Conditions: 150 mM KOAc, 10 mM MgCl2 and 150 mM bicine (pH 8.5), 24 C. An RNA of 177 nucleotides, treated with DMS and read out base by base. The data come from the RNA Mapping Database (RMDB), library OK2TRN. For DMS, 1,180 sequencing reads were counted.

RNA sequence: GGGAACGACUCGAGUAGAGUCGAAAAUAAGCUUUGGCCAGUAAUAAGUCCGAAUAAGACAAUCGAAGGAUUCAUAGGUGGCUUGUUCUGUAGUUUGAUAGUGCCUCUUGCAAUGUUAUAUUUUGUACGGUUCAAUGGAUUUCGAUCCAUUGAACCGAAAAGAAACAACAACAACAAC
Reactivity to DMS in 0.01 (KOAc 150mM, MgCl2 10mM, bicine 150mM(pH8.5), 24C), signal-to-noise 1, nucleotides 027 to 126: u020a090a110g010c050u000u000u000g000g000c050c010a000g000u000a040a080u010a030a090g030u000c020c040g000a070a070u010a050a060g010a150c110a030a040u000c070g020a120a130g020g010a060u000u000c090a070u030a080g000g000u000g010g000c040u000u000g010u000u000c040u010g030u000a050g000u000u000u010g000a080u010a040g010u000g020c050c030u000c090u000u000g000c020a080a080u000g000u000u000a070u000a110u010u000u010u000g020u000a150